RNA sequence: GGGAACGACUCGAGUAGAGUCGAAAAUGAGAAGACAGACAAUGGUUUCUCACCAAAGCCAAAGUGAAACAUUUGAGCUUUCUAAAAUGGUGCAGUGGGCAUAUGAUAAUGAUUAUUUUGAAGAGUCCGUACUUGGCGUCUUCGGACGCCAAGUACGAAAAGAAACAACAACAACAAC
Reactivity to 2A3 in 0.01 (KOAc 150mM, MgCl2 10mM, bicine 150mM(pH8.5), 24C), signal-to-noise 2, nucleotides 027 to 126: u050g000a010g000a000a000g080a010c120a070g050a040c050a120a300u000g190g000u000u000u000c010u000c000a040c000c000a020a020a020g000c000c000a020a000a050g020u130g100a050a100a190c300a300u040u040u040g000a000g000c000u000u140u000c050u160a030a120a130a130u130g010g000u000g000c000a010g000u110g000g100g000c000a110u050a000u250g120a110u080a170a040u220g110a070u000u290a280u150u030u070u140g230a240a140g000a000g190u000c000
The data come from the RNA Mapping Database (RMDB), library OK1LIB. Structure probing data (2A3) for a 177-nucleotide construct. The 2A3 profile rests on 347 reads. Values cover nucleotides 27 to 126.